[RMDB]
Annotation: An RNA of 177 nucleotides, treated with 2A3 and DMS and read out base by base.
RNA sequence: GGGAACGACUCGAGUAGAGUCGAAAAUAAACAAAACAAAUUUAAACGAGUAUGGUGCAGCUGAGAGGCUCGACAGAUGCACCUAGAAGCGAGCCUUCAAGCACCAGACGAAAAGUCUGGUGCAAAACGUCAUCGAGGACUUCGGUCCUUGAUGACGAAAAGAAACAACAACAACAAC
Reactivity to 2A3 in 0.01 (KOAc 150mM, MgCl2 10mM, bicine 150mM(pH8.5), 24C), signal-to-noise 2, nucleotides 027 to 126: u070a000a040a020c020a000a160a000a010c040a020a090a070u020u100u170a110a220a010c110g030a030g080u150a120u170g000g000u000g000c010a010g000c050u020g000a010g020a010g060g000c020u020c000g000a000c000a010g000a030u000g000c000a000c000c000u010a000g000a000a000g020c000g000a000g000c000c020u010u020c010a010a000g000c000a020c000c000a000g010a000c000g060a110a040a000a000g000u010c000u000g010g000u010g030c000a000a000a000a000
Reactivity to DMS in 0.01 (KOAc 150mM, MgCl2 10mM, bicine 150mM(pH8.5), 24C), signal-to-noise 2, nucleotides 027 to 126: u040a030a080a070c110a110a030a050a060c100a140a060a080u040u050u000a110a070a060c170g000a080g050u020a030u000g000g010u000g020c000a050g010c000u000g020a090g000a120g000g000c010u010c000g030a030c040a060g010a000u000g000c000a000c000c000u000a000g000a070a000g000c000g000a000g000c000c000u000u000c000a120a070g000c000a000c000c000a000g010a000c020g000a080a090a160a120g000u000c000u000g000g000u000g020c000a000a000a180a170

Source: RMDB library OK1LIB, as collected in RNAgym. Values cover nucleotides 27 to 126.